[RMDB]
RNA sequence: GGGAACGACUCGAGUAGAGUCGAAAAAGUGAACUGCAGUUGCCAUGUUUUACGGCAGUGAGAGCAGAGAUAGCGCUGAUGUCCGGCAGUGCUUUUGCCGUUACGCACCACCCCGUCAGUAGCUGAAAUGAGCAACAGAAUUCGUUCUGUUGCUCAUAAAAGAAACAACAACAACAAC
Reactivity to DMS in 0.01 (KOAc 150mM, MgCl2 10mM, bicine 150mM(pH8.5), 24C), signal-to-noise 5, nucleotides 027 to 126: a090g020u000g000a080a130c020u000g010c010a150g010u000u000g010c020c040a130u000g010u010u010u010u020a080c140g010g010c000a020g010u000g000a150g010a120g000c030a040g000a180g000a130u000a040g020c010g000c020u000g000a050u000g000u000c130c070g010g010c110a030g010u000g000c020u000u000u000u000g000c050c050g000u010u000a100c160g010c030a060c040c050a130c020c010c060c040g010u000c040a030g000u000a080g030c020u000g010a060a110
Reactivity to 2A3 in 0.01 (KOAc 150mM, MgCl2 10mM, bicine 150mM(pH8.5), 24C), signal-to-noise 3, nucleotides 027 to 126: a000g180u100g020a080a030c020u010g010c000a030g010u030u010g020c020c000a040u100g240u130u260u090u210a060c060g010g020c010a010g010u030g030a240g020a020g000c000a010g020a010g020a100u140a030g000c010g000c020u010g010a010u040g080u110c070c000g000g000c050a010g020u040g050c000u030u010u010u050g030c040c020g060u070u060a060c100g020c020a020c030c000a030c010c010c010c010g010u010c020a020g010u040a090g020c010u020g020a120a040